[RMDB]
The record gives the reactivity of an RNA of 177 nucleotides to DMS and 2A3. It was measured as part of the RMDB library M2PK50. The 2A3 profile rests on 1,471 reads. Conditions: 150 mM KOAc, 10 mM MgCl2 and 150 mM bicine (pH 8.5), 24 C.
RNA sequence: GGGAACGACUCGAGUAGAGUCGAAAAGUACUACCGUUCGCGGUAGUACAAAUAAUCCAGCCUGGAAAGGCUGGAGCCAAAACUAAGGUAAAGGCACCAUAGAAAGAGCAGAGUUCGCUCUGCUCAACACGGCUUAGAAGUUCGCUUCUAAGCCGUGAAAAGAAACAACAACAACAAC
Reactivity to DMS in 0.01 (KOAc 150mM, MgCl2 10mM, bicine 150mM(pH8.5), 24C), signal-to-noise 1, nucleotides 027 to 126: g000u000a010c000u010a020c000c000g000u000u000c150g000c010g020g000u000a000g020u000a000c000a020a080a090u000a100a120u000c000c000a000g000c000c000u000g000g030a200a110a000g000g000c000u000g000g000a010g000c010c000a060a030a160a120c010u010a120a040g010g020u010a050a140a160g000g000c020a100c100c030a070u020a040g000a090a050a100g000a000g000c000a030g010a050g020u000u000c240g040c020u020c000u000g000c000u000c000a030a110
Reactivity to 2A3 in 0.01 (KOAc 150mM, MgCl2 10mM, bicine 150mM(pH8.5), 24C), signal-to-noise 1, nucleotides 027 to 126: g020u000a000c000u000a000c000c000g030u000u050c230g020c000g020g010u000a000g000u030a010c000a000a000a000u030a010a000u000c000c000a000g030c000c000u050g000g080a120a070a000g020g010c000u010g000g000a010g020c000c000a050a110a030a040c040u040a080a130g120g000u040a070a020a170g110g000c030a020c040c020a070u060a110g180a060a230a010g020a010g020c020a000g000a000g000u000u080c120g020c030u000c000u000g020c000u040c010a000a030